Structure probing data (DMS and 2A3) for a 177-nucleotide construct.
The DMS profile rests on 3,937 reads.
The data come from the RNA Mapping Database (RMDB), library M2PK50.
RNA sequence: GGGAACGACUCGAGUAGAGUCGAAAAGGGUUACCCUUCGGGGUAACCCAUACCUCCUGGCGGUGCGGCGCCGGGCCCGCCGGGAAGGCCGCCUUUACCUCCUAAAGGAAUCAUUCGUGAUUCCUAAAUAAUUGGUGGAAUUCGUUCCACCAAUUAUAAAAGAAACAACAACAACAAC
Reactivity to DMS in 0.01 (KOAc 150mM, MgCl2 10mM, bicine 150mM(pH8.5), 24C), signal-to-noise 3, nucleotides 027 to 126: g010g010g010u000u000a000c000c000c000u000u010c180g020g010g030g000u010a000a000c000c000c010a010u000a030c040c030u000c010c010u000g020g010c020g010g030u010g010c040g020g030c040g020c050c020g000g010g000c050c020c020g000c020c010g000g010g000a030a030g010g020c060c080g020c020c030u000u010u000a130c080c040u000c020c030u000a070a120a050g010g000a020a000u000c010a030u000u010c190g020u000g000a010u000u000c000c000u000a010a050
Reactivity to 2A3 in 0.01 (KOAc 150mM, MgCl2 10mM, bicine 150mM(pH8.5), 24C), signal-to-noise 2, nucleotides 027 to 126: g050g000g000u040u050a000c000c020c030u040u050c240g040g020g000g000u000a010a000c000c000c000a000u020a000c000c000u020c000c010u000g010g000c010g010g020u120g010c010g060g000c030g050c060c000g000g030g000c010c000c010g000c010c000g010g000g000a000a000g050g010c050c030g030c020c000u090u140u140a150c030c000u060c000c030u160a260a130a030g010g000a010a010u010c000a000u030u090c110g090u020g000a000u010u000c000c000u000a000a060